This 177-nucleotide RNA was probed chemically with DMS and 2A3. Conditions: 150 mM KOAc, 10 mM MgCl2 and 150 mM bicine (pH 8.5), 24 C. In probing experiments dimethyl sulfate is read out at A N1 and C N3, which are open when not base-paired. The data come from the RNA Mapping Database (RMDB), library OK2TRN.
RNA sequence: GGGAACGACUCGAGUAGAGUCGAAAAUUUAGUCAUUUCUGUUUUGAAAUAGCCCGGCGCAAUACCGUUGACCUGAAUAUUGUGGCGCGCCAGCUCGACGCACAUGCCGCGGGUGAGCAUUUUUACAAUACUCAUAAAAUUUCGAUUUUAUGAGUAUAAAAGAAACAACAACAACAAC
Reactivity to DMS in 0.01 (KOAc 150mM, MgCl2 10mM, bicine 150mM(pH8.5), 24C), signal-to-noise 7, nucleotides 027 to 126: u010u010u010a100g010u010c070a060u010u010u010c010u010g010u010u010u010u000g000a030a060a060u000a140g020c020c050c040g010g010c030g020c030a060a260u000a040c070c070g000u000u000g010a120c070c050u000g000a080a090u010a060u000u010g020u010g010g010c270g010c060g000c040c040a090g020c060u000c040g010a070c010g010c040a060c120a090u000g000c130c120g010c030g000g010g020u000g000a050g010c040a030u010u000u010u000u010a090c090a100
Reactivity to 2A3 in 0.01 (KOAc 150mM, MgCl2 10mM, bicine 150mM(pH8.5), 24C), signal-to-noise 3, nucleotides 027 to 126: u050u050u060a030g010u030c020a000u000u050u050c030u060g290u170u130u230u220g060a070a060a040u050a050g030c010c030c000g040g020c000g040c000a000a040u050a080c020c020g080u050u100g110a110c040c060u110g060a150a050u150a090u110u080g020u020g050g010c010g000c000g010c030c030a000g030c000u010c010g010a020c000g020c040a050c030a100u240g100c100c100g030c040g000g050g170u070g030a000g000c020a010u090u150u050u040u000a010c010a060